An RNA of 177 nucleotides, treated with DMS and 2A3 and read out base by base. For 2A3, 27,178 sequencing reads were counted. The RNA was probed in 150 mM KOAc, 10 mM MgCl2 and 150 mM bicine (pH 8.5) at 24 C. Source: RMDB library OK1LIB, as collected in RNAgym. Values cover nucleotides 27 to 126. As a SHAPE reagent, 2A3 marks flexible, mostly unpaired nucleotides at the ribose 2'-OH.

RNA sequence: GGGAACGACUCGAGUAGAGUCGAAAAUCAAGCGUACAACAUCGAUGUAAGAGAGCUCCUAGUCUCUCUUACUCGAAGUCUUACUCUUUGAGUAAGUUCCUGGGAGAAGGUAUUGAAGUUGUACGAAGAUUGUAGUCUCAUUCGUGAGGUUACAAUCAAAAGAAACAACAACAACAAC
Reactivity to DMS in 0.01 (KOAc 150mM, MgCl2 10mM, bicine 150mM(pH8.5), 24C), signal-to-noise 9, nucleotides 027 to 126: u020c040a080a090g010c050g010u000a000c010a010a000c000a120u000c010g010a010u040g010u000a010a010g000a020g000a010g010c040u020c190c160u020a070g000u040c020u000c010u000c000u000u000a000c000u000c000g000a040a070g000u010c050u000u000a020c030u000c000u020u010u040g000a020g010u010a020a050g010u010u000c030c000u000g010g010g010a110g010a090a070g000g010u010a140u010u010g010a040a210g010u000u000g010u000a010c010g010a120a120
Reactivity to 2A3 in 0.01 (KOAc 150mM, MgCl2 10mM, bicine 150mM(pH8.5), 24C), signal-to-noise 9, nucleotides 027 to 126: u090c020a020a020g070c000g000u000a000c000a000a000c000a050u020c000g020a020u090g020u050a020a010g030a000g000a010g030c000u060c030c060u070a070g100u020c010u000c000u000c000u020u000a000c000u000c000g000a010a000g020u000c010u010u010a040c010u000c010u040u040u190g010a010g000u010a020a010g010u030u040c000c000u010g010g030g010a050g010a030a020g050g020u060a040u040u110g050a100a020g000u000u000g000u000a000c000g000a020a010